[RMDB]
RNA sequence: GGGAACGACUCGAGUAGAGUCGAAAAUCGUCAUCUAUACCGAGAAUUUUUUGUGAUUUACACAUUUGGAGAACAUUGACAAUAUCUUUAUAACUCUUAGUGCUAUCCAAUAAGUAAGCAAGAUCAACUUAUAUCACCCGUUCGCGGGUGAUAUAAGAAAAGAAACAACAACAACAAC
Reactivity to DMS in 0.01 (KOAc 150mM, MgCl2 10mM, bicine 150mM(pH8.5), 24C), signal-to-noise 1, nucleotides 027 to 126: u000c040g000u010c020a080u030c030u000a090u010a110c080c010g000a110g000a100a010u000u030u010u010u000u000g030u010g030a140u000u000u020a080c060a040c080a200u000u010u000g040g010a050g010a010a090c040a000u000u020g000a000c050a040a090u000a180u000c100u040u010u000a080u010a060a120c190u000c070u000u020a020g050u000g010c010u000a190u000c010c020a010a020u000a020a080g010u000a040a060g000c040a000a050g000a090u000c130a030a270
Reactivity to 2A3 in 0.01 (KOAc 150mM, MgCl2 10mM, bicine 150mM(pH8.5), 24C), signal-to-noise 1, nucleotides 027 to 126: u050c000g080u030c000a090u090c110u090a180u110a150c010c140g060a060g030a230a060u000u040u070u070u030u120g060u070g120a280u080u050u190a000c000a000c000a090u050u050u050g000g000a060g000a060a000c000a010u070u010g050a020c050a090a140u060a070u250c030u090u300u120a220u160a090a110c050u090c010u010u070a020g000u020g040c000u040a010u100c000c000a000a030u020a030a000g060u020a020a000g060c060a010a000g000a060u120c010a010a030